[RMDB]
RNA sequence: GGGAACGACUCGAGUAGAGUCGAAAAUAGCCAACACUGGGAUCCAGAAAAAUUGACUAUAAACAAGUAUGCUGUUUCGAUGAAAUUGUGUAAUAGAAACUAGAUUCCAGUGUCAGCUACUUGCAUGAUAACCACUCGUUUUCGAACGAGUGGUUAUAAAAGAAACAACAACAACAAC
Reactivity to 2A3 in 0.01 (KOAc 150mM, MgCl2 10mM, bicine 150mM(pH8.5), 24C), signal-to-noise 4, nucleotides 027 to 126: u030a000g020c010c010a010a000c000a000c000u000g000g010g000a000u020c000c020a020g190a040a120a000a020a020u160u160g080a050c010u070a060u200a130a130a010c030a050a050g080u060a090u120g070c030u030g020u030u050u050c170g090a200u250g100a080a080a030u040u020g020u000g050u110a000a060u020a070g100a050a040a000c000u010a000g000a000u000u020c000c000a010g010u000g000u000c020a020g010c000u010a040c050u070u120g070c030a060u130g000
Reactivity to DMS in 0.01 (KOAc 150mM, MgCl2 10mM, bicine 150mM(pH8.5), 24C), signal-to-noise 3, nucleotides 027 to 126: u000a000g010c000c040a200a030c010a010c000u020g010g000g010a000u000c000c040a040g020a040a110a070a090a100u020u020g000a160c060u010a060u000a040a140a110c100a030a160g000u010a010u000g010c010u000g020u000u010u000c030g030a190u040g010a010a010a070u030u010g010u010g030u020a030a070u010a070g030a070a060a150c010u000a030g010a000u000u000c000c020a000g000u000g000u000c060a140g000c010u000a020c100u010u020g000c130a060u010g000
Record summary
Structure probing data (2A3 and DMS) for a 177-nucleotide construct. Source: RMDB libraries RFM100 and RFMREP, as collected in RNAgym. The RNA was probed in 150 mM KOAc, 10 mM MgCl2 and 150 mM bicine (pH 8.5) at 24 C.